[RMDB]
RNA sequence: GGGAACGACUCGAGUAGAGUCGAAAAACGAGUGAGUUACGACUCACUCGACUUUUAAUGCUACCCAAAGGUCGUGAGAAGUCGAUAAAACGCAGAGUCAAAAAGUCCGACGUUACGACGUCGGACAACGAGCGAGUUCUGUUCGCAGAACUCGCAAGUUAUCAUACGUCUUCGGACGUAUGAUAACAAAAGAAACAACAACAACAAC
Reactivity to DMS in 0.01 (KOAc 150mM, MgCl2 10mM, bicine 150mM(pH8.5), 24C), signal-to-noise 2, nucleotides 027 to 156: a110c050g010a050g040u010g000a050g050u000u010a130c160g090a260c000u000c000a050c000u000c010g030a020c000u000u010u000u000a050a000u000g010c040u000a080c020c000c050a070a090a160g010g010u010c000g030u000g000a120g000a110a130g010u010c030g000a240u000a020a030a070a100c070g030c090a060g050a260g010u000c010a080a030a150a130a120g000u000c000c000g000a020c000g000u010u000a110c270g000a090c010g030u000c030g030g000a000c020a000a010c030g030a140g010c020g010a020g010u000u000c010u000g030u010u000c300g040c000a030g000a030a010c010u000c000g060c010a000a010
Reactivity to 2A3 in 0.01 (KOAc 150mM, MgCl2 10mM, bicine 150mM(pH8.5), 24C), signal-to-noise 4, nucleotides 027 to 156: a000c020g000a010g010u010g010a010g000u010u110a110c260g040a020c060u000c010a000c000u000c000g000a000c000u040u040u010u140a120a090u120g020c010u030a030c000c030c000a090a110a040g040g000u050c020g010u040g020a100g030a090a010g070u020c020g020a040u060a100a110a020a000c030g010c140a000g010a030g060u070c070a040a020a040a050a080g010u000c000c000g000a010c010g010u020u040a080c300g000a000c000g050u010c010g000g000a000c000a000a000c000g020a010g010c000g000a000g000u000u000c000u010g040u020u060c220g000c070a000g000a000a000c000u010c010g000c000a000a010